[RMDB]
Record summary:
The record gives the reactivity of an RNA of 207 nucleotides to 2A3. 2A3 adducts were read by reverse transcription with SuperScript II with manganese. The RNA was probed in 150 mM KOAc, 10 mM MgCl2 and 150 mM bicine (pH 8.5) at 24 C. The 2A3 profile rests on 2,027 reads.

RNA sequence: GGGAACGACUCGAGUAGAGUCGAAAAACGUCAAGGUGGGAUGCCUUGCGGGAGGAGGCCGGGGAGGAGGGCACAUGCCUCAGGCUGGGGGUCUGACUCUGUGCAUCUUUCCCCUUGCCCAGUCAGUAAUCGCUCUCCCCAUCCCCAGAGCACCCACGUUACCCAAUCUAUUCGUAGAUUGGGUAACAAAAGAAACAACAACAACAAC
Reactivity to 2A3 in 0.01 (KOAc 150mM, MgCl2 10mM, bicine 150mM(pH8.5), 24C), signal-to-noise 3, nucleotides 027 to 156: a010c100g090u140c050a060a020g040g010u040g020g100g010a130u150g000c020c000u030u030g020c080g010g030g040a090g050g030a040g070g040c050c010g070g010g010g000a050g010g010a000g000g030g050c010a060c010a110u120g020c000c010u030c040a010g010g000c020u010g020g000g000g000g000u020c010u000g010a030c040u060c110u260g190u120g070c080a060u010c030u010u080u020c010c010c010c000u010u000g010c000c000c000a020g020u030c020a010g000u120a090a110u160c100g000c010u030c000u010c010c000c010c030a080u020c000c000c000c030a030g000a000g040c000a040c000c010c000a010c050